Structure probing data (2A3) for a 177-nucleotide construct. 2A3 adducts were read by reverse transcription with SuperScript II with manganese. Values cover nucleotides 27 to 126. It was measured as part of the RMDB library OK1LIB. Conditions: 150 mM KOAc, 10 mM MgCl2 and 150 mM bicine (pH 8.5), 24 C. Reactivities are rounded to 0.1 and cut off at 0 and 3.
RNA sequence: GGGAACGACUCGAGUAGAGUCGAAAAUGCCAAAGGAUUUCCCACCAUUUGCAAAGAAGAGCUUGUUUCGGCCACCCAUCAAGGAAGAAAGAGUGUGUAUGGUGGGAACUAAUUUUCAAGAGAAGAGGCGGGUUAAUCAAUUCGUUGAUUAACCCGCAAAAGAAACAACAACAACAAC
Reactivity to 2A3 in 0.01 (KOAc 150mM, MgCl2 10mM, bicine 150mM(pH8.5), 24C), signal-to-noise 1, nucleotides 027 to 126: u300g100c000c000a180a000a010g150g000a010u000u090u120c010c000c000a000c000c000a000u000u000u190g000c060a070a080a060g000a260a000g120a150g130c000u170u210g090u110u120u110c040g000g000c000c010a030c000c000c000a000u080c000a180a050g020g080a110a000g030a000a150a000g050a030g010u060g000u000g040u000a020u000g000g000u000g010g000g020a000a000c000u060a000a000u000u000u000u070c130a100a100g220a030g060a070a040g080a010g060